An RNA of 207 nucleotides, treated with 2A3 and read out base by base.
The reactions ran in a buffer of 150 mM KOAc, 10 mM MgCl2 and 150 mM bicine (pH 8.5), at 24 C.
It was measured as part of the RMDB library M2RFPK.
[RMDB]
RNA sequence: GGGAACGACUCGAGUAGAGUCGAAAACAUUACGAAUUCAUUCGCAAAUUGUAGAAUUAGCUACUCUACGAUUUAGUGAGCGUUAGUAACGUUGUAAUAUAAUAUAGUCUUUGGAAGGAUUAUAUUGGAGCCGCGGACAAGUUCGCUUGUCCGCGAAGGGGAAUAGCUAGUUCGCUAGCUAUUCCCCAAAAGAAACAACAACAACAAC
Reactivity to 2A3 in 0.01 (KOAc 150mM, MgCl2 10mM, bicine 150mM(pH8.5), 24C), signal-to-noise 2, nucleotides 027 to 156: c010a030u060u220a020c020g090a130a180u170u130c030a030u050u040c050g010c020a010a000a030u000u020g000u000a000g010a040a030u050u020a090g060c030u100a030c020u000c000u010a000c000g020a010u000u030u030a020g010u010g020a010g000c020g030u040u040a050g040u020a080a040c020g000u000u030g010u040a040a120u070a050u010a170a010u010a000u010a000g010u000c020u140u100u180g080g050a130a090g020g000a010u000u000a000u020a000u010u000g020g090a060g080c060c030g010c000g010g000a000c000a000a000g030u110u080c120g010c140u000u010g000u010c000c010g000c010g000a000a000